[RMDB]
RNA sequence: GGGAACGACUCGAGUAGAGUCGAAAAGUAAGAUGAUUCGUCAUCUUACGAACCCGAUGAAGCGGCACAUACCGAGCUACAUACAUCUAAGAGUGCAAAUAAUGGCGCGUGGUUUCGACCACGCGAAACCUUUGAUUUCGUUCGCGAAAUCAAAGGUAAAAGAAACAACAACAACAAC
Reactivity to 2A3 in 0.01 (KOAc 150mM, MgCl2 10mM, bicine 150mM(pH8.5), 24C), signal-to-noise 1, nucleotides 027 to 126: g000u000a000a000g000a010u030g020a030u000u130c130g070u010c120a010u000c000u000u000a000c000g000a020a050c040c020c000g000a070u110g080a100a020g050c040g050g000c040a040c020a090u110a070c010c010g030a000g020c060u010a010c010a100u150a060c040a030u010c050u090a080a050g090a050g090u080g060c030a000a050a090u230a120a080u220g140g000c010g000c010g000u000g000g000u040u000u030c100g050a000c040c000a000c000g000c010g000a000a000
Reactivity to DMS in 0.01 (KOAc 150mM, MgCl2 10mM, bicine 150mM(pH8.5), 24C), signal-to-noise 2, nucleotides 027 to 126: g010u000a010a000g020a000u000g010a030u000u010c220g020u000c000a010u000c000u000u000a000c010g000a060a150c020c010c020g030a080u010g020a180a070g010c070g010g000c040a100c080a080u000a080c060c080g010a070g000c020u000a100c040a060u000a100c090a020u000c070u010a070a100g000a060g000u000g010c060a110a080a110u010a040a040u000g020g010c000g010c010g040u000g000g010u000u010u000c180g030a030c010c020a020c000g030c010g010a010a030
Annotation: Chemical mapping of a 177-nucleotide RNA with 2A3 and DMS. As a SHAPE reagent, 2A3 marks flexible, mostly unpaired nucleotides at the ribose 2'-OH. For 2A3, 1,720 sequencing reads were counted. The RNA was probed in 150 mM KOAc, 10 mM MgCl2 and 150 mM bicine (pH 8.5) at 24 C. For DMS the reverse transcriptase was MarathonRT. For 2A3 the reverse transcriptase was SuperScript II with manganese. For DMS, 1,786 sequencing reads were counted.